[RMDB]
RNA sequence: GGGAACGACUCGAGUAGAGUCGAAAAAGAUAUGGACGUGACCCACUCCCCCGACCAGCUUGGAUUUAGAGCUCGGAAACGAGCUCUUGUCAGCUGUGUCGGCGGCCCGGGUGCACGUCCUAAGUCACGAACUAUGAUGGUUCGCCAUCAUAGUUCGAAAAGAAACAACAACAACAAC
Reactivity to DMS in 0.01 (KOAc 150mM, MgCl2 10mM, bicine 150mM(pH8.5), 24C), signal-to-noise 2, nucleotides 027 to 126: a060g010a050u010a300u010g000g030a020c000g040u000g000a090c010c000c000a230c240u000c070c010c100c010c000g010a030c000c000a000g000c010u000u050g030g000a010u010u000u010a010g010a010g000c000u000c000g020g000a080a090a240c000g020a020g000c000u000c010u010u000g000u000c000a030g010c000u010g010u010g010u000c010g020g020c300g010g000c300c290c160g010g010g000u000g030c020a000c010g000u000c000c010u010a010a070g000u000c070a300
Reactivity to 2A3 in 0.01 (KOAc 150mM, MgCl2 10mM, bicine 150mM(pH8.5), 24C), signal-to-noise 2, nucleotides 027 to 126: a030g100a050u140a060u140g000g000a000c000g020u000g010a020c000c020c020a040c100u100c060c040c020c000c000g010a010c000c000a000g000c030u100u300g180g000a040u300u220u030a040g000a000g040c010u020c010g020g000a050a020a070c020g000a000g000c000u000c000u010u000g000u000c000a010g030c000u010g100u120g000u110c000g000g000c030g020g050c020c080c050g060g050g040u300g230c020a020c000g000u010c000c010u000a010a020g030u030c010a010